[RMDB]
RNA sequence: GGGAACGACUCGAGUAGAGUCGAAAACAGUGACUCAAUAUAUAACGCCACCACAGAUUCAGGUACAGAAGACACAUCAUCUAUUGGUAGUGGACCAUCAGAAUCCUCAGCAGCAAGUUUUCACUUCUCUCUUAAGAGAGGUCUGAACAGCACAGAACGUAUAGUUAGCGUUCGCGCUAACUAUACGAAAAGAAACAACAACAACAAC
Reactivity to 2A3 in 0.01 (KOAc 150mM, MgCl2 10mM, bicine 150mM(pH8.5), 24C), signal-to-noise 5, nucleotides 027 to 156: c040a020g070u020g080a020c010u040c090a100a020u100a020u020a020u030a270a060c070g010c040c020a040c020c010a050c020a040g050a030u050u090c040a030g020g020u040a060c020a070g080a080a010g050a070c040a020c010a120u100c010a020u040c040u150a130u160u080g060g010u050a080g020u030g070g050a050c020c010a030u080c010a010g100a100a050u020c000c010u040c030a050g010c010a000g000c010a070a070g020u060u000u060u060c020a010c010u050u000c000u000c000u000c010u070u180a140a000g010a000g010a000g030g010u000c010u030g030a040a040c010a030g030c020a000c020a060g150a150a020
Reactivity to DMS in 0.01 (KOAc 150mM, MgCl2 10mM, bicine 150mM(pH8.5), 24C), signal-to-noise 2, nucleotides 027 to 156: c030a110g010u000g000a100c040u000c090a100a190u000a120u000a150u000a100a120c060g000c000c010a040c020c040a110c110a100g020a140u000u010c060a070g010g030u000a200c080a110g000a110a060g000a110c040a040c040a150u000c070a040u000c030u000a120u000u020g000g040u010a080g030u000g010g010a020c060c030a080u020c030a100g010a040a080u000c020c000u000c040a070g000c060a090g040c040a050a100g000u000u000u000u000c030a060c010u000u010c010u000c010u000c160u000u000a090a100g030a000g000a030g000g010u000c000u000g000a000a000c030a140g000c020a000c020a060g000a090a200